[RMDB]
RNA sequence: GGGAACGACUCGAGUAGAGUCGAAAAAUAACCUCCCCCGGUGAUUCGAUGGAGCGCCGCAAGGCGAGCCGAUGAAUUGCCGAGAAGCCUGGCUCGAAAUCGUCGACGCAUCGACGACGGUCCUGCCUAAAACGCUUCAUUUCGAUGAAGCGUUUUAAAAAGAAACAACAACAACAAC
Reactivity to DMS in 0.01 (KOAc 150mM, MgCl2 10mM, bicine 150mM(pH8.5), 24C), signal-to-noise 4, nucleotides 027 to 126: a040u000a160a100c070c040u000c050c000c000c010c000g020g020u010g000a000u000u010c000g010a150u010g000g000a020g010c000g000c000c000g020c300a200a140g000g000c000g000a000g010c000c000g000a150u020g000a000a000u000u000g010c020c000g000a050g020a070a100g020c070c060u010g010g010c000u010c220g010a080a270a130u000c010g010u000c010g000a110c300g010c230a120u020c020g000a030c000g000a000c060g000g010u000c020c050u000g000c020c040
Reactivity to 2A3 in 0.01 (KOAc 150mM, MgCl2 10mM, bicine 150mM(pH8.5), 24C), signal-to-noise 4, nucleotides 027 to 126: a010u110a040a020c000c020u010c010c000c000c010c000g000g000u010g000a030u010u000c010g040a070u300g000g000a030g020c000g000c010c010g000c070a030a020g000g000c000g000a000g010c000c010g020a020u070g000a000a020u000u000g000c000c000g000a020g010a020a000g020c030c100u090g010g000c020u070c090g050a080a090a070u040c000g020u000c000g030a060c080g020c200a190u120c050g010a010c020g000a000c000g010g010u060c000c010u020g000c000c010
The record gives the reactivity of an RNA of 177 nucleotides to DMS and 2A3. Source: RMDB library RFM100, as collected in RNAgym. Conditions: 150 mM KOAc, 10 mM MgCl2 and 150 mM bicine (pH 8.5), 24 C. The 2A3 profile rests on 3,424 reads. For DMS the reverse transcriptase was MarathonRT. 2A3 adducts were read by reverse transcription with SuperScript II with manganese.